RNA sequence: GGGAACGACUCGAGUAGAGUCGAAAACUGACAUGUAAAAAAAUUCUUUCAGCAGGAGCAUUAAUCUUAAACGUGUGUAAACACCAAAGCUAUGGUUAACCCUAUCUGCCCCUUAGGUCUACAGCCAGCUAGUACUAGUGUUCGCACUAGUACUAGCAAAAGAAACAACAACAACAAC
Reactivity to DMS in 0.01 (KOAc 150mM, MgCl2 10mM, bicine 150mM(pH8.5), 24C), signal-to-noise 1, nucleotides 027 to 126: c030u030g010a020c220a040u040g000u010a020a000a040a090a050a030a110u000u000c010u010u010u010c010a100g010c120a090g000g010a070g030c080a080u000u000a010a070u010c010u030u000a060a020a100c220g010u010g000u000g020u000a090a100a030c030a000c010c070a070a090a110g010c080u000a030u000g010g010u000u000a040a060c020c030c000u010a030u000c060u000g030c060c010c000c080u000u000a050g000g010u000c040u010a100c140a080g030c030c030a120
Reactivity to 2A3 in 0.01 (KOAc 150mM, MgCl2 10mM, bicine 150mM(pH8.5), 24C), signal-to-noise 1, nucleotides 027 to 126: c060u050g040a000c030a170u220g020u300a000a080a000a000a110a000a270u180u060c020u000u170u040c040a010g040c000a010g000g080a010g030c020a000u060u050a160a170u040c010u020u020a000a200a030c020g050u020g010u020g040u300a130a180a030c000a010c010c060a110a110a000g030c070u120a060u150g000g010u060u000a010a000c000c000c070u030a070u120c040u070g090c060c000c000c000u000u100a000g030g030u000c010u020a050c050a010g010c000c000a010